[RMDB]
RNA sequence: GGGAACGACUCGAGUAGAGUCGAAAAGCCGGUAAGUUCGCUUACCGGCAAAAUCCGAGAAUGGAGCUCGGAAACAAACUCCAAACGUUGGAAACAACGAAUAAACACUCUGGUUCGCCAGAGUGAACUGUUAAAGACAGUUCGCUGUCUUUAACAGAAAAGAAACAACAACAACAAC
Reactivity to DMS in 0.01 (KOAc 150mM, MgCl2 10mM, bicine 150mM(pH8.5), 24C), signal-to-noise 3, nucleotides 027 to 126: g040c020c010g040g000u000a000a000g010u000u030c240g010c010u000u010a000c010c000g020g010c000a010a030a080a080u000c000c000g000a020g000a150a080u000g000g010a020g010c000u000c010g010g000a120a060a110c130a020a020a080c040u000c000c000a020a130a230c030g010u000u020g000g000a180a110a210c000a000a010c010g000a150a110u010a080a090a180c000a000c000u010c000u000g000g000u000u000c220g040c000c000a020g000a020g030u000g000a030a080
Reactivity to 2A3 in 0.01 (KOAc 150mM, MgCl2 10mM, bicine 150mM(pH8.5), 24C), signal-to-noise 3, nucleotides 027 to 126: g010c000c010g010g000u010a000a000g000u020u120c170g000c170u000u000a010c000c000g000g000c000a000a010a000a000u020c000c010g000a000g020a050a150u040g000g000a010g020c010u010c000g040g040a010a010a000c020a000a010a010c010u010c010c000a040a040a040c010g000u000u000g020g020a040a040a020c010a010a000c010g010a010a040u120a060a050a010c010a000c000u000c000u000g000g080u060u070c220g060c040c000a000g000a000g000u000g000a010a020
About this RNA
Chemical mapping of a 177-nucleotide RNA with DMS and 2A3. For 2A3 the reverse transcriptase was SuperScript II with manganese. Values cover nucleotides 27 to 126. For 2A3, 5,818 sequencing reads were counted. High DMS reactivity at an A or C suggests that its Watson-Crick edge is free. The reactions ran in a buffer of 150 mM KOAc, 10 mM MgCl2 and 150 mM bicine (pH 8.5), at 24 C.